[RMDB]
Chemical mapping of a 207-nucleotide RNA with 2A3 and DMS.
High DMS reactivity at an A or C suggests that its Watson-Crick edge is free.
Source: RMDB library OK3TST, as collected in RNAgym.
For 2A3 the reverse transcriptase was SuperScript II with manganese.
RNA sequence: GGGAACGACUCGAGUAGAGUCGAAAAGGCCGUCGAUCGUCGCGAAGACCCCGCCCCCGGACCUGGACGACUCGGUGUCGACGUACGAGACGGUCAAGGCGAUGCACCCCGACAUCGACGGAACGACCGCGGUCCUCGACCCAGUCCUCGCGCGUGACACUCUAUCUUUAUUCGUAAAGAUAGAGUGAAAAGAAACAACAACAACAAC
Reactivity to 2A3 in 0.01 (KOAc 150mM, MgCl2 10mM, bicine 150mM(pH8.5), 24C), signal-to-noise 4, nucleotides 027 to 156: g060g010c020c010g000u020c010g030a060u010c080g030u000c020g010c060g060a030a040g070a110c030c020c040c010g020c010c020c000c010c030g080g030a090c020c030u100g060g000a050c020g030a030c020u030c130g070g010u130g040u080c030g020a040c030g010u050a030c040g010a030g040a090c000g020g000u030c030a020a020g030g010c020g020a030u060g010c040a100c020c040c010c010g010a010c000a010u000c000g020a030c020g030g030a090a050c050g040a010c020c020g020c020g010g020u050c010c020u020c040g070a130c000c000c020a030g060u080c020c020u060c010g050c000g030c020g040u040g010a010
Reactivity to DMS in 0.01 (KOAc 150mM, MgCl2 10mM, bicine 150mM(pH8.5), 24C), signal-to-noise 2, nucleotides 027 to 156: g030g060c000c030g050u010c020g010a080u000c080g030u000c030g040c040g020a110a220g000a120c030c030c020c030g020c030c000c050c020c000g010g000a090c040c020u000g000g020a090c020g000a110c040u000c070g040g020u000g030u000c020g000a150c050g000u000a040c010g000a100g000a090c030g010g010u000c030a030a050g000g040c020g000a080u000g000c060a140c040c020c020c000g010a090c030a040u000c000g010a050c010g040g010a080a090c050g000a090c030c030g030c040g000g010u000c000c030u000c060g010a100c010c010c020a100g000u000c010c030u000c000g030c010g000c030g010u020g000a300
The 2A3 profile rests on 4,332 reads. The DMS profile rests on 6,621 reads.